[RMDB]
RNA sequence: GGGAACGACUCGAGUAGAGUCGAAAAAAGAAAGAGAACAUAUCGAAAAAAGUCGCGUAAAAUUACGCGAUUUCGUCGAUAUCGUACUGGAACGCGUGCGAAGGCUAAGAGCUACUUCAGGCUUAGGAACGUCGCGAAGAUUCGUCUUCGCGACGUUAAAAGAAACAACAACAACAAC
Reactivity to DMS in 0.01 (KOAc 150mM, MgCl2 10mM, bicine 150mM(pH8.5), 24C), signal-to-noise 1, nucleotides 027 to 126: a050a120g030a110a080a020g010a150g000a130a110c220a020u020a000u020c050g000a000a030a000a260a000a000g000u000c000g000c000g000u000a000a300a070a110u080u000a000c000g020c010g050a000u000u000u000c170g070u000c010g010a000u060a000u000c180g000u000a060c010u000g000g010a080a060c200g000c010g010u000g040c010g000a210a000g000g000c000u000a000a180g030a160g000c020u000a120c000u090u070c060a080g000g020c000u000u000a300g060g000
Reactivity to 2A3 in 0.01 (KOAc 150mM, MgCl2 10mM, bicine 150mM(pH8.5), 24C), signal-to-noise 1, nucleotides 027 to 126: a000a000g260a010a010a000g120a000g030a080a000c030a040u030a000u000c030g020a070a000a000a000a000a000g000u000c000g000c000g000u070a150a260a090a150u300u020a000c000g000c000g000a000u000u000u000c000g010u000c030g010a000u000a000u010c050g000u090a100c050u030g000g080a110a010c070g000c030g070u070g000c010g050a060a030g000g000c000u030a080a000g050a000g080c000u010a030c100u300u050c050a060g080g000c060u070u090a130g080g060
Overview
Structure probing data (DMS and 2A3) for a 177-nucleotide construct. For 2A3, 567 sequencing reads were counted. Conditions: 150 mM KOAc, 10 mM MgCl2 and 150 mM bicine (pH 8.5), 24 C. For DMS the reverse transcriptase was MarathonRT. The data come from the RNA Mapping Database (RMDB), library OK1LIB.